Description: Chemical mapping of a 207-nucleotide RNA with 2A3.
RNA sequence: GGGAACGACUCGAGUAGAGUCGAAAAGAUAUGGACACUUAAUCUUGUGAAACGGACCAAUGAUGUGUGACCGCUCCUCGGAAACGAGGAUGUCACAUUGAGGUCCGCCAGCGAGUCUAAAGUGUCCUAAGUCAAAACAACCCGUUCGCGGGUUGAACCCAUUGAUUGAGUUCGCUCAAUCAAUGGGAAAAGAAACAACAACAACAAC
Reactivity to 2A3 in 0.01 (KOAc 150mM, MgCl2 10mM, bicine 150mM(pH8.5), 24C), signal-to-noise 3, nucleotides 027 to 156: g020a020u060a030u130g000g000a000c000a000c020u030u060a030a040u130c010u020u030g010u000g030a120a050a010c000g000g010a010c000c000a050a300u100g030a020u060g050u010g000u000g030a000c010c000g010c010u000c000c010u000c000g030g040a110a090a050c010g010a000g030g020a040u150g000u000c000a000c000a000u000u010g000a000g000g000u000c000c000g010c000c000a020g000c010g000a010g000u040c110u220a100a040a010g010u020g000u000c000c000u000a010a000g000u000c020a000a030a120a200c000a000a010c000c030c000g010u040u050c300g000c020g030g000g000u020u030g010a010a050